[RMDB]
An RNA of 177 nucleotides, treated with DMS and read out base by base. The RNA was probed in 150 mM KOAc, 10 mM MgCl2 and 150 mM bicine (pH 8.5) at 24 C.
RNA sequence: GGGAACGACUCGAGUAGAGUCGAAAAGAAAGAAAGAAAUGGGGGAGUGAAGAGUAGAUAAAAUAUUGGUACCUGAUGAAUCUGAGGCCAGGUUUCAAUACUUUAUCUGCUCUUCAUUUCCCCAUAAACUAAUAGCGUCUUUCGAGACGCUAUUAGUAAAAGAAACAACAACAACAAC
Reactivity to DMS in 0.01 (KOAc 150mM, MgCl2 10mM, bicine 150mM(pH8.5), 24C), signal-to-noise 3, nucleotides 027 to 126: g010a080a120a100g010a140a110a080g000a080a110a020u000g010g000g000g000g010a010g030u000g000a000a000g000a010g020u000a000g010a010u000a010a000a010a010u000a010u000u000g000g010u010a000c000c000u000g000a210u040g000a100a080u040c190u010g010a120g020g010c090c000a010g000g010u000u000u000c000a010a000u000a000c060u000u000u000a000u000c000u000g000c000u000c000u000u000c010a000u000u000u000c000c000c010c000a000u000a010a050